[RMDB]
An RNA of 177 nucleotides, treated with 2A3 and DMS and read out base by base. For DMS the reverse transcriptase was MarathonRT. Reactivities are rounded to 0.1 and cut off at 0 and 3.
RNA sequence: GGGAACGACUCGAGUAGAGUCGAAAAGAAAAGAGCGUAAUCGCGUCUUGACGUGAGUGAGUCUAGACUGUAGGCUAUCCCAAGUGGGAUAGCAUAACUCACAAUACGCUGAUCUACAGUCAAAAGAGAUGGAUCACCUAUUCGUAGGUGAUCCAUCAAAAGAAACAACAACAACAAC
Reactivity to 2A3 in 0.01 (KOAc 150mM, MgCl2 10mM, bicine 150mM(pH8.5), 24C), signal-to-noise 5, nucleotides 027 to 126: g190a010a060a000a000g010a000g000c000g000u000a050a050u060c010g000c000g020u010c100u120u210g110a010c000g000u010g010a020g000u010g000a000g010u010c030u040a080g010a000c000u000g000u000a000g030g000c000u000a010u010c020c000c020a100a110g300u300g070g000g000a000u000a000g000c000a000u020a010a000c000u000c000a000c000a000a020u020a000c000g000c000u000g010a050u050c000u010a000c000a000g000u000c010a040a040a010a020g120a000
Reactivity to DMS in 0.01 (KOAc 150mM, MgCl2 10mM, bicine 150mM(pH8.5), 24C), signal-to-noise 1, nucleotides 027 to 126: g040a100a030a030a080g000a000g000c000g020u000a100a300u000c000g000c010g010u000c030u030u000g000a010c000g040u000g000a060g000u000g000a010g000u000c050u000a060g010a000c000u000g010u000a000g000g090c020u000a000u000c000c000c000a230a240g030u010g000g020g000a000u000a000g000c000a030u000a000a030c010u000c000a000c000a020a100u000a000c000g000c000u000g010a090u000c000u000a000c000a010g000u010c000a060a040a160a120g020a160